[RMDB]
RNA sequence: GGGAACGACUCGAGUAGAGUCGAAAAUACGUGGUGGGUCGUGAACAAGCCCGGAGUACAUUCCCUAUUGGAACUAAGGGAACCCCUCCGGUCUUGUCCAACCUCUGUUUCGGCAGAGGACACCGCGCUCCAUAGCUGUAAGGCUAUGGGCCCGAGAGUCUAACGUUUACUUCGGUAAACGUUAGACAAAAGAAACAACAACAACAAC
Reactivity to 2A3 in 0.01 (KOAc 150mM, MgCl2 10mM, bicine 150mM(pH8.5), 24C), signal-to-noise 3, nucleotides 027 to 156: u220a010c020g000u000g000g010u060g000g100g090u160c080g120u150g140a080a020c020a000a000g000c010c000c010g000g000a000g020u060a060c020a150u020u030c020c010c020u020a130u060u150g150g070a100a110c080u080a130a140g000g010g000a000a000c020c000c000c020u000c000c000g010g000u020c000u000u000g000u000c000c000a040a080c000c000u000c000u000g010u010u050u100c210g130g000c000a000g000a020g020g010a000c010a000c000c000g000c000g020c000u000c000c000a010u010a010g000c000u020g130u300a250a080g080g000c010u000a000u000g010g000g000c000c000c020g070a070g010a020

The record gives the reactivity of an RNA of 207 nucleotides to 2A3.
For 2A3 the reverse transcriptase was SuperScript II with manganese.
As a SHAPE reagent, 2A3 marks flexible, mostly unpaired nucleotides at the ribose 2'-OH.
Reactivities are given for positions 27 through 156.